[RMDB]
RNA sequence: GGGAACGACUCGAGUAGAGUCGAAAAAUGGUAAAUACUUUACAAGUGAACCACCCGUAACAUAUUCACCAGCUACAAUUUUAGCUGGUAGUGUCUACACUAAUAGCUGCCUUGUAUCGUCUGAUGGGUUAUUAGGUUCGUUCGCGAACCUAAUAACAAAAGAAACAACAACAACAAC
Reactivity to 2A3 in 0.01 (KOAc 150mM, MgCl2 10mM, bicine 150mM(pH8.5), 24C), signal-to-noise 2, nucleotides 027 to 126: a000u030g000g000u040a260a000a040u070a150c000u050u090u110a070c130a100a000g000u010g050a030a000c010c010a070c000c030c010g000u010a050a050c020a030u110a180u220u140c050a010c010c000a000g020c000u020a060c050a300a300u010u050u170u090a010g000c010u000g040g000u000a000g000u030g000u010c080u030a070c050a040c000u050a040a060u050a100g050c030u030g010c000c040u010u030g000u030a050u040c030g090u040c040u050g100a130u060g190g000
Reactivity to DMS in 0.01 (KOAc 150mM, MgCl2 10mM, bicine 150mM(pH8.5), 24C), signal-to-noise 1, nucleotides 027 to 126: a200u000g000g000u000a080a130a020u000a070c010u010u000u010a080c170a090a090g000u010g000a190a040c050c030a070c020c050c000g030u010a130a060c140a010u000a110u010u000c150a030c000c000a010g010c000u010a010c280a050a070u000u010u000u000a000g000c010u000g020g010u000a010g010u000g030u010c110u000a050c010a080c130u030a040a090u000a010g030c050u000g010c070c170u010u000g000u000a050u000c050g030u000c080u000g010a010u000g010g010

Source: RMDB library 15KREP, as collected in RNAgym. An RNA of 177 nucleotides, treated with 2A3 and DMS and read out base by base. The DMS profile rests on 856 reads. Conditions: 150 mM KOAc, 10 mM MgCl2 and 150 mM bicine (pH 8.5), 24 C. Values cover nucleotides 27 to 126.